[RMDB]
RNA sequence: GGGAACGACUCGAGUAGAGUCGAAAACUCGAGAAUCGGCAAAUGGGGCCCCUCGCUCGUAUCUCCGAGAGGAGACGAGAAGGAGGUGGAUCUCCCUUUGCCAUCCGAGGGGAUUGCGUCCUCCUUAUAACUCGCACGUUCGCGUGCGAGAAAAGAAACAACAACAACAAC
Reactivity to 2A3 in 0.01 (KOAc 150mM, MgCl2 10mM, bicine 150mM(pH8.5), 24C), signal-to-noise 6, nucleotides 027 to 129: c010u000c000g060a080g030a200a110u140c090g000g000c000a000a020a060u190g000g000g000g000c000c000c000c000u000c000g010c000u000c000g070u090a150u060c000u000c010c000g060a030g000a030g100g010a000g000a000c010g010a000g020a020a080g190g020a000g000g020u300g030g000a080u020c050u040c020c010c000u000u000u000g000c000c000a010u000c010c010g000a010g000g000g010g010a050u020u210g040c050g090u000c020c010u060c000c020u130u110a150u070a180a080
Reactivity to DMS in 0.01 (KOAc 150mM, MgCl2 10mM, bicine 150mM(pH8.5), 24C), signal-to-noise 4, nucleotides 027 to 129: c010u030c040g010a160g000a130a060u060c220g060g000c030a030a010a020u040g010g000g050g000c010c040c060c030u000c000g030c010u010c060g010u020a130u010c000u030c000c010g010a220g010a300g000g000a050g000a020c000g010a060g000a050a000g060g020a040g030g010u110g030g010a000u080c040u030c000c000c000u000u000u000g030c050c000a010u030c120c000g000a030g030g030g000g030a080u030u110g020c070g030u050c000c030u050c050c020u030u060a170u060a030a120
Chemical mapping of a 170-nucleotide RNA with 2A3 and DMS. The DMS profile rests on 8,096 reads. For 2A3 the reverse transcriptase was SuperScript II with manganese. The data come from the RNA Mapping Database (RMDB), library 15KLIB. DMS adducts were read by reverse transcription with MarathonRT. Conditions: 150 mM KOAc, 10 mM MgCl2 and 150 mM bicine (pH 8.5), 24 C.